An RNA of 177 nucleotides, treated with 2A3 and DMS and read out base by base. In probing experiments dimethyl sulfate is read out at A N1 and C N3, which are open when not base-paired. The RNA was probed in 150 mM KOAc, 10 mM MgCl2 and 150 mM bicine (pH 8.5) at 24 C. Values cover nucleotides 27 to 126. It was measured as part of the RMDB library OK1LIB. For DMS the reverse transcriptase was MarathonRT. 2A3 adducts were read by reverse transcription with SuperScript II with manganese.
[RMDB]
RNA sequence: GGGAACGACUCGAGUAGAGUCGAAAACAAACAAACAAAACAACAAGUGCCGAAAUAAAAUCGCUGUAAGGGAUGACGGAAAGAAAACCAAGUCAUCCCAAAACGGCACAAAACAGCGAAAACAAAACUAGUCGUAAGACUUCGGUCUUACGACUAGAAAAGAAACAACAACAACAAC
Reactivity to 2A3 in 0.01 (KOAc 150mM, MgCl2 10mM, bicine 150mM(pH8.5), 24C), signal-to-noise 1, nucleotides 027 to 126: c010a020a230a000c000a010a090a010c070a020a080a050a020c180a100a020c000a060a060g030u000g020c000c000g150a140a050a070u290a030a150a000a030u000c000g000c020u000g000u000a000a070g000g000g000a000u000g000a000c060g020g060a040a150a000g300a050a150a000a000c020c000a080a030g020u000c000a000u010c030c000c000a000a000a000a000c000g000g000c000a000c010a000a000a000a000c000a000g020c000g060a060a180a000a000c120a000a120a000a090
Reactivity to DMS in 0.01 (KOAc 150mM, MgCl2 10mM, bicine 150mM(pH8.5), 24C), signal-to-noise 1, nucleotides 027 to 126: c080a170a080a090c090a150a090a110c210a110a000a200a110c260a110a100c090a130a170g000u000g020c050c000g000a030a000a000u110a030a080a090a160u010c010g040c060u000g000u000a020a000g000g020g010a000u000g000a010c000g000g060a080a000a070g000a120a080a110a110c160c000a210a040g000u000c000a000u000c000c000c000a010a030a000a110c040g010g070c000a000c000a000a080a150a030c000a000g020c040g000a060a110a040a000c300a000a010a050a060